[RMDB]
RNA sequence: GGGAACGACUCGAGUAGAGUCGAAAACAGAAGUAGCUUCAGGACAGAAGAUUGCUGUACCAGCAACAUCACAUCAUUUUUGCUUUUCAAUAGACUUAAGGAGUAUACAUGCCUUGGAGAUUGGUUUUCCAAUCAACUGUAUAUUAAGGUGUGAUUACACCAUACGUCGAUUCGUCGACGUAUGGUGAAAAGAAACAACAACAACAAC
Reactivity to DMS in 0.01 (KOAc 150mM, MgCl2 10mM, bicine 150mM(pH8.5), 24C), signal-to-noise 2, nucleotides 027 to 156: c040a120g020a030a080g050u000a080g000c040u000u010c050a090g010g030a210c070a260g010a070a150g010a140u000u000g010c040u000g000u000a060c070c020a100g010c080a110a100c120a100u000c010a000c040a030u040c020a200u000u010u000u000u000g000c040u000u000u000u000c140a050a160u010a110g000a060c070u020u000a030a100g030g030a100g020u000a020u000a030c020a010u010g000c050c300u000u010g010g010a070g010a100u000u000g010g010u030u000u020u030c020c020a000a040u000c000a060a040c030u020g010u010a020u000a000u000u000a060a140g000g000u000g040u000g010a070u000u000a180
Reactivity to 2A3 in 0.01 (KOAc 150mM, MgCl2 10mM, bicine 150mM(pH8.5), 24C), signal-to-noise 5, nucleotides 027 to 156: c020a010g070a120a010g060u100a010g030c010u050u060c060a030g160g070a050c020a050g050a120a030g050a200u070u170g020c010u020g000u070a120c020c020a010g060c020a030a050c010a030u050c010a010c000a040u020c040a110u010u030u070u120u090g040c010u080u080u080u060c060a110a110u080a150g040a120c020u050u110a050a010g060g020a010g060u040a030u030a100c060a030u110g040c010c030u050u040g080g010a070g000a060u010u040g030g050u110u060u150u090c010c000a000a010u010c010a020a060c030u040g040u050a040u010a020u120u140a060a050g000g000u000g000u010g010a000u060u060a020

Source: RMDB library OK3TST, as collected in RNAgym. Structure probing data (DMS and 2A3) for a 207-nucleotide construct. For DMS, 2,415 sequencing reads were counted. 2A3 adducts were read by reverse transcription with SuperScript II with manganese. Values cover nucleotides 27 to 156. For DMS the reverse transcriptase was MarathonRT. The reactions ran in a buffer of 150 mM KOAc, 10 mM MgCl2 and 150 mM bicine (pH 8.5), at 24 C.